This 177-nucleotide RNA was probed chemically with 2A3 and DMS. Reactivities are rounded to 0.1 and cut off at 0 and 3. DMS adducts were read by reverse transcription with MarathonRT. Source: RMDB library OK2TST, as collected in RNAgym. For 2A3 the reverse transcriptase was SuperScript II with manganese. Values cover nucleotides 27 to 126.
RNA sequence: GGGAACGACUCGAGUAGAGUCGAAAACUGCCAGACCGAGCGCGGCAUCGUCGUCGAGCUGGCCGAGCGUGCACCCGACGGCACGCUGAUCCGCGACCCGUACAUCGAAACCUCGGCCUACGCGCGGUGCCACGCGUAUGUUCGCAUACGCGUGGCAAAAAGAAACAACAACAACAAC
Reactivity to 2A3 in 0.01 (KOAc 150mM, MgCl2 10mM, bicine 150mM(pH8.5), 24C), signal-to-noise 1, nucleotides 027 to 126: c030u040g030c030c000a030g080a090c020c040g040a010g080c000g000c010g050g030c040a100u060c020g170u020c010g010u010c020g040a030g000c150u040g020g000c030c000g000a030g000c070g000u010g020c030a080c040c000c030g050a190c020g040g050c030a000c050g000c020u040g050a150u040c050c000g000c010g040a070c060c020c000g020u060a070c090a110u130c090g070a060a030a050c000c010u000c010g000g040c010c000u010a020c010g000c000g000c000g000g010
Reactivity to DMS in 0.01 (KOAc 150mM, MgCl2 10mM, bicine 150mM(pH8.5), 24C), signal-to-noise 1, nucleotides 027 to 126: c110u000g020c000c000a140g010a120c000c050g000a060g000c100g040c060g020g010c070a040u000c030g060u000c030g020u000c010g020a100g010c080u000g020g020c010c050g000a010g020c050g010u010g000c030a040c050c070c040g010a100c130g000g000c010a030c060g000c000u010g000a040u030c110c030g000c000g020a060c160c040c020g020u000a080c090a080u020c070g020a110a070a140c080c050u000c060g000g010c030c010u000a120c080g020c030g000c040g000g030
The 2A3 profile rests on 1,429 reads. Conditions: 150 mM KOAc, 10 mM MgCl2 and 150 mM bicine (pH 8.5), 24 C. The DMS profile rests on 1,065 reads.